[RMDB]
RNA sequence: GGGAACGACUCGAGUAGAGUCGAAAAUAUAGGUUGCAUCUGGAUAAUGAGAUAUGAGAGGGAAGAUUUUACUGCUCUGGUUGGUUGGUGAUAUCUUGAUCACACAGCUUUCAUCUCCCUGUAACCUGAUCAUGAACUCCCCCUCACCGUAUUUUCACCAUACGCACUGAUUCGUCAGUGCGUAUGGAAAAGAAACAACAACAACAAC
Reactivity to DMS in 0.01 (KOAc 150mM, MgCl2 10mM, bicine 150mM(pH8.5), 24C), signal-to-noise 1, nucleotides 027 to 156: u010a060u000a030g020g020u000u000g030c030a070u000c030u020g030g030a150u000a070a120u000g030a080g020a100u000a060u020g010a110g010a040g010g040g040a060a070g000a130u000u000u020u000a090c060u010g030c070u000c120u000g010g010u000u000g050g030u000u000g060g000u010g000a110u010a030u040c150u000u010g010a120u000c050a060c100a070c040a090g030c080u010u020u000c060a050u020c050u000c010c010c080u000g010u010a060a020c070c040u020g020a070u000c140a140u010g030a100a120c010u000c000c000c000c020c000u010c000a040c020c040g000u010a080u000u000u000u000c110a300
Reactivity to 2A3 in 0.01 (KOAc 150mM, MgCl2 10mM, bicine 150mM(pH8.5), 24C), signal-to-noise 1, nucleotides 027 to 156: u090a020u040a030g040g000u020u020g010c000a070u040c130u060g040g000a080u070a160a080u270g050a070g010a020u110a070u140g060a100g010a040g000g040g010a010a040g020a040u000u040u050u190a110c040u050g080c030u010c000u040g090g000u010u080g010g000u000u020g000g030u000g010a010u000a040u100c050u060u170g100a040u130c010a020c010a020c010a040g020c010u000u100u000c000a070u030c060u060c060c000c010u000g020u010a020a010c010c020u000g020a000u020c050a070u130g020a050a050c040u040c000c000c030c000c000u050c030a040c020c000g000u050a040u030u200u220u190c000a080
This 207-nucleotide RNA was probed chemically with DMS and 2A3. Reactivities are given for positions 27 through 156. DMS adducts were read by reverse transcription with MarathonRT. For DMS, 1,945 sequencing reads were counted. The RNA was probed in 150 mM KOAc, 10 mM MgCl2 and 150 mM bicine (pH 8.5) at 24 C. Source: RMDB library OK3TST, as collected in RNAgym.